[RMDB]
RNA sequence: GGGAACGACUCGAGUAGAGUCGAAAAAUACUCGCUGGGACAACUCAGUACCGUGUUGUCAGAUCGUACUGAAGCGCGCACGGUAUAGAUCUUGGAUUUACACGGGAACCGUUGUCCUGUGCUGAAGCGCGCACGGCAACCGAAAGGUGCGAUAGAACCUUUGUCUACUGUUCGCAGUAGACAAAGGAAAAGAAACAACAACAACAAC
Reactivity to DMS in 0.01 (KOAc 150mM, MgCl2 10mM, bicine 150mM(pH8.5), 24C), signal-to-noise 2, nucleotides 027 to 156: a110u000a100c090u010c040g130c030u010g030g000g030a020c000a000a000c000u020c020a110g000u000a090c020c000g000u000g010u000u000g040u000c300a030g000a030u010c030g050u020a020c000u000g010a040a050g000c000g010c000g040c040a300c020g000g010u000a010u000a030g030a010u000c010u010u010g040g010a200u000u000u020a040c010a030c000g030g000g010a090a120c140c300g000u040u020g020u000c000c010u010g030u000g000c000u000g010a080a070g030c020g050c030g000c040a300c130g000g010c000a050a070c030c040g000a160a090a140g000g010u000g020c000g030a070u000a250g000a070a210
Reactivity to 2A3 in 0.01 (KOAc 150mM, MgCl2 10mM, bicine 150mM(pH8.5), 24C), signal-to-noise 3, nucleotides 027 to 156: a000u090a050c010u000c010g000c020u020g000g000g000a000c000a000a000c000u000c010a010g000u000a000c000c000g000u010g010u030u070g110u040c040a030g000a000u010c010g000u010a000c010u030g110a290a100g010c000g000c000g000c000a020c020g000g010u010a010u030a020g000a000u000c020u090u220g200g040a190u250u160u180a000c000a000c000g010g010g000a000a000c010c000g000u010u000g010u000c000c000u000g000u000g000c010u020g000a090a040g000c000g000c000g010c000a030c040g020g000c000a020a020c010c010g050a080a040a030g040g000u030g000c010g000a010u050a060g110a040a060
This 207-nucleotide RNA was probed chemically with DMS and 2A3. It was measured as part of the RMDB library RNAMAK. As a SHAPE reagent, 2A3 marks flexible, mostly unpaired nucleotides at the ribose 2'-OH.